[RMDB]
RNA sequence: GGGAACGACUCGAGUAGAGUCGAAAAAAACCAUAGGGAGAUAUUCUUGAGCAAAGAGAACGGCAUCAUAUUUUUGCAACACCUUAAUGGGACACAAUUGCUGGGGCCCUGAAUACCUGCUCUAUCAUCGUGUAUGUUAGUUCGCUAACAUACACGAAAAAGAAACAACAACAACAAC
Reactivity to DMS in 0.01 (KOAc 150mM, MgCl2 10mM, bicine 150mM(pH8.5), 24C), signal-to-noise 3, nucleotides 027 to 126: a080a060a090c040c040a060u030a040g020g010g010a090g000a080u000a060u000u000c030u000u000g010a170g010c040a100a040a070g000a130g020a070a080c150g000g020c030a020u000c080a030u000a050u000u000u000u000u000g000c060a060a080c140a140c020c030u000u020a050a090u000g010g000g000a110c110a030c040a040a070u000u000g010c100u010g010g000g020g010c020c020c010u000g000a060a050u000a050c030c000u000g010c020u000c020u010a030u010c130a090
Reactivity to 2A3 in 0.01 (KOAc 150mM, MgCl2 10mM, bicine 150mM(pH8.5), 24C), signal-to-noise 3, nucleotides 027 to 126: a000a000a000c040c000a040u070a030g000g020g000a040g010a020u010a020u110u030c010u030u070g040a110g040c050a120a110a040g070a050g050a110a010c060g020g000c000a020u020c070a010u080a170u190u160u060u100u110g030c050a080a040c010a120c050c010u070u110a170a060u240g010g010g040a000c020a000c000a100a190u130u060g000c020u040g010g000g110g000c000c020c000u010g020a000a030u030a020c000c010u070g130c000u040c020u010a080u050c060a050
Source: RMDB library OK2TRN, as collected in RNAgym. The record gives the reactivity of an RNA of 177 nucleotides to DMS and 2A3. Values are in units of 0.01, from 0 to 300, in steps of 10. DMS adducts were read by reverse transcription with MarathonRT. The reactions ran in a buffer of 150 mM KOAc, 10 mM MgCl2 and 150 mM bicine (pH 8.5), at 24 C.